[RMDB]
RNA sequence: GGGAACGACUCGAGUAGAGUCGAAAACUCGUAAAAACGCACAAGCCAAUAACUGGCAAAGAAAACAACAACUUCGCUCUAGCUGCAUAAGCUAAGCGGUCUCUCCUCUCCAUCGCCCAUGUGGAGUGGCUGAGACUCAACUUUAGUGGGAUACGCCGUACUUCUCCUUCUUCGGAAGGAGAAGUACAAAAGAAACAACAACAACAAC
Reactivity to 2A3 in 0.01 (KOAc 150mM, MgCl2 10mM, bicine 150mM(pH8.5), 24C), signal-to-noise 5, nucleotides 027 to 156: c000u000c010g040u050a070a050a030a050a060c090g080c030a120c070a170a090g010c010c010a070a140u170a280a110c110u070g000g000c060a040a080a010g080a030a090a020a040c130a050a010c020a080a100c070u110u070c050g010c010u050c050u020a000g000c000u030g030c040a110u050a300a000g000c000u000a010a000g000c010g010g000u000c000u000c000u000c000c000u000c000u000c010c000a020u030c010g020c020c000c000a000u010g000u010g010g000a000g000u010g010g000c090u030g000a000g030a010c030u000c000a040a200c040u130u200u200a020g000u000g010g030g000a030u060a100c100g070c110c080